[RMDB]
Description: Conditions: 150 mM KOAc, 10 mM MgCl2 and 150 mM bicine (pH 8.5), 24 C. Structure probing data (DMS and 2A3) for a 177-nucleotide construct. 2A3 adducts were read by reverse transcription with SuperScript II with manganese. DMS adducts were read by reverse transcription with MarathonRT. For DMS, 1,448 sequencing reads were counted. Reactivities are given for positions 27 through 126.

RNA sequence: GGGAACGACUCGAGUAGAGUCGAAAAGCAGUGUGGUGAUGUUUGGUGGGGUGGACCACCGCUACUACAAGGGAGAGCUCAACUGGGUACCAGUGUCCCAAACUCGCCACUGGCAGAUAAGCAUGAAGCUGAUUGAAGCAUUCGUGCUUCAAUCAGCAAAAGAAACAACAACAACAAC
Reactivity to DMS in 0.01 (KOAc 150mM, MgCl2 10mM, bicine 150mM(pH8.5), 24C), signal-to-noise 2, nucleotides 027 to 126: g010c040a070g040u010g010u000g020g030u000g040a040u010g000u000u000u000g020g020u010g000g000g030g010u000g010g000a160c050c080a070c070c100g020c060u000a050c060u000a050c150a150a100g000g030g010a090g010a100g010c050u000c110a060a080c100u020g000g000g000u000a090c020c010a000g000u000g000u020c100c010c020a030a030a050c040u000c020g000c030c010a010c070u010g000g020c010a080g000a090u000a020a080g010c040a070u000g020a080a110
Reactivity to 2A3 in 0.01 (KOAc 150mM, MgCl2 10mM, bicine 150mM(pH8.5), 24C), signal-to-noise 2, nucleotides 027 to 126: g080c060a040g070u000g000u000g060g030u010g050a050u200g030u060u110u010g000g020u160g000g070g030g070u060g030g010a020c020c010a020c050c000g000c030u080a140c000u020a000c050a090a090g020g170g020a080g000a010g040c000u020c180a040a100c070u160g030g010g000u040a110c000c050a030g030u020g150u080c000c000c000a010a030a010c010u010c000g050c010c000a050c020u000g040g030c010a010g000a180u080a150a040g040c110a070u080g080a040a010